[RMDB]
Structure probing data (DMS) for a 177-nucleotide construct. The reactions ran in a buffer of 150 mM KOAc, 10 mM MgCl2 and 150 mM bicine (pH 8.5), at 24 C. Source: RMDB library M2PK50, as collected in RNAgym.

RNA sequence: GGGAACGACUCGAGUAGAGUCGAAAAUCUUCGUACUUCGGUACGAAGAAAAGGCCAACCCACUGGCGGAGGUGAAACGCAGCGUGGAGGGCACCAACGCGAAAACGGGGGGCUUCGGCCCCCCGAAUCCAACUGUAAGGUUCGCCUUACAGUUGGAAAAAGAAACAACAACAACAAC
Reactivity to DMS in 0.01 (KOAc 150mM, MgCl2 10mM, bicine 150mM(pH8.5), 24C), signal-to-noise 1, nucleotides 027 to 126: u000c010u010u010c000g000u010a000c000u010u000c220g000g000u000a000c000g010a010a000g020a010a040a100a150g000g000c020c060a030a180c060c000c000a080c110u030g060g020c030g000g000a090g030g020u000g000a060a100a090c040g000c060a030g030c040g020u030g000g000a090g010g000g010c040a090c050c040a080a120c100g000c030g030a040a060a090a170c040g010g000g050g040g040g020c000u000u030c180g060g030c000c000c020c000c000c030g000a010a030